Notes: Chemical mapping of a 177-nucleotide RNA with DMS and 2A3. The 2A3 profile rests on 23,761 reads. For 2A3 the reverse transcriptase was SuperScript II with manganese.
RNA sequence: GGGAACGACUCGAGUAGAGUCGAAAAGAUAUGGAUAUCAGGGAGCUCCUGACUCGGAAACGAGUCCUGAGCAUCGAUCUGAGAUCCUAAGUCAAAACUCAUGUCGUUGUUCGCAACGACAUGAGAACCUUAGAUAUCUGUUCGCAGAUAUCUAAGGAAAAGAAACAACAACAACAAC
Reactivity to DMS in 0.01 (KOAc 150mM, MgCl2 10mM, bicine 150mM(pH8.5), 24C), signal-to-noise 5, nucleotides 027 to 126: g000a010u000a050u000g010g000a010u000a070u000c000a000g010g020g010a010g020c000u000c000c020u010g000a010c000u000c000g020g010a010a020a030c000g010a010g010u010c000c030u010g010a010g040c010a300u000c160g000a060u010c010u000g000a030g000a090u000c000c000u000a010a110g000u000c020a120a080a080a170c000u000c000a000u000g000u000c000g010u000u000g010u000u010c250g020c000a000a010c000g000a000c000a000u000g000a010g010a020a090
Reactivity to 2A3 in 0.01 (KOAc 150mM, MgCl2 10mM, bicine 150mM(pH8.5), 24C), signal-to-noise 3, nucleotides 027 to 126: g000a000u020a010u070g000g000a000u010a010u040c010a000g000g000g010a020g000c000u010c010c020u020g010a000c010u000c010g000g000a010a020a010c000g000a000g000u010c000c010u000g000a010g000c010a040u300c010g000a010u000c000u010g000a010g010a020u000c000c000u000a020a010g020u010c020a020a030a050a250c010u000c000a010u000g000u000c000g000u000u020g020u080u120c300g000c140a000a000c000g010a020c000a010u000g000a000g000a000a010